[RMDB]
RNA sequence: GGGAACGACUCGAGUAGAGUCGAAAAUUCCAUUUGAGUAUCCUGAAAACGGGCUUUUCAGCAUGGAACGUACAUAUUAAAUAGUAGGAGUGCAUAGUGGCUCGUAUAGCAGGCAUUAACAUUCCUGAAAACGUGAAAAGGUUCGCCUUUUCACGAACAUGAUUAUGAGCUUCGGCUCAUAAUCAUGAAAAGAAACAACAACAACAAC
Reactivity to DMS in 0.01 (KOAc 150mM, MgCl2 10mM, bicine 150mM(pH8.5), 24C), signal-to-noise 2, nucleotides 027 to 156: u010u010c000c000a130u000u000u000g010a140g010u000a070u020c010c000u010g000a040a060a110a150c070g080g040g060c070u040u000u000u000c050a130g000c060a090u000g020g030a060a070c070g010u010a090c020a060u000a130u000u000a080a080a140u000a160g020u000a050g020g000a140g060u000g020c010a120u000a110g030u000g010g000c000u000c040g000u000a080u000a160g010c080a030g030g000c070a050u000u000a070a040c040a070u000u000c000c000u000g010a070a090a130a160c020g060u010g000a030a010a010a000g010g030u000u000c300g010c040c000u000u000u000u010c010a000c000g000a020a060
Reactivity to 2A3 in 0.01 (KOAc 150mM, MgCl2 10mM, bicine 150mM(pH8.5), 24C), signal-to-noise 4, nucleotides 027 to 156: u030u000c010c000a020u120u010u070g040a040g030u100a120u160c010c030u040g020a040a020a030a130c050g000g020g020c020u090u080u050u110c070a030g000c000a040u030g030g020a120a040c040g090u130a020c040a030u160a070u200u300a150a130a110u160a050g100u030a020g010g090a030g000u010g010c030a040u050a110g060u050g040g010c000u010c020g050u050a070u120a150g080c050a000g010g000c000a000u000u010a020a020c010a020u010u100c000c000u030g070a040a090a060a040c000g000u000g010a010a000a000a000g030g010u020u080c160g110c000c000u000u000u000u000c000a000c000g000a000a000